An RNA of 177 nucleotides, treated with 2A3 and DMS and read out base by base. For 2A3 the reverse transcriptase was SuperScript II with manganese. It was measured as part of the RMDB library M2PK90. The RNA was probed in 150 mM KOAc, 10 mM MgCl2 and 150 mM bicine (pH 8.5) at 24 C.
[RMDB]
RNA sequence: GGGAACGACUCGAGUAGAGUCGAAAAUAAAAGAGUGCGUGCUAGCACAAACCAGACCAAUGAUAAGUGCAUGGUCGCACAAGUACAGCUUCGCCUGUACAAAGCGAACAACAACAACAACAAAAAAGACUAGUCAUAUGUUCGCAUAUGACUAGUCAAAAGAAACAACAACAACAAC
Reactivity to 2A3 in 0.01 (KOAc 150mM, MgCl2 10mM, bicine 150mM(pH8.5), 24C), signal-to-noise 2, nucleotides 027 to 126: u150a000a100a020a010g180a020g030u010g000c010g030u120g100c020u030a020g000c000a000c020a000a060a030c000c010a030g140a090c040c060a090a200u080g060a040u130a210a040g020u020g020c010a110u100g100g000u030c010g000c000a020c010a080a000g020u020a010c010a010g010c040u100u160c070g030c050c000u020g000u030a030c010a000a090a010g100c070g060a020a020c010a010a010c000a000a000c010a010a000c000a050a010c010a040a060a000a020a030a010
Reactivity to DMS in 0.01 (KOAc 150mM, MgCl2 10mM, bicine 150mM(pH8.5), 24C), signal-to-noise 2, nucleotides 027 to 126: u030a060a090a130a110g010a230g000u000g010c010g000u010g030c030u000a120g020c000a000c020a010a090a100c100c040a030g000a160c130c120a090a060u000g000a030u000a030a200g000u000g000c020a100u000g000g000u000c020g050c020a020c070a090a160g000u010a000c000a020g010c060u000u010c190g010c190c000u000g000u000a000c040a080a060a120g020c050g010a040a070c040a030a050c020a020a030c030a030a000c060a000a000c060a000a040a140a050a050a070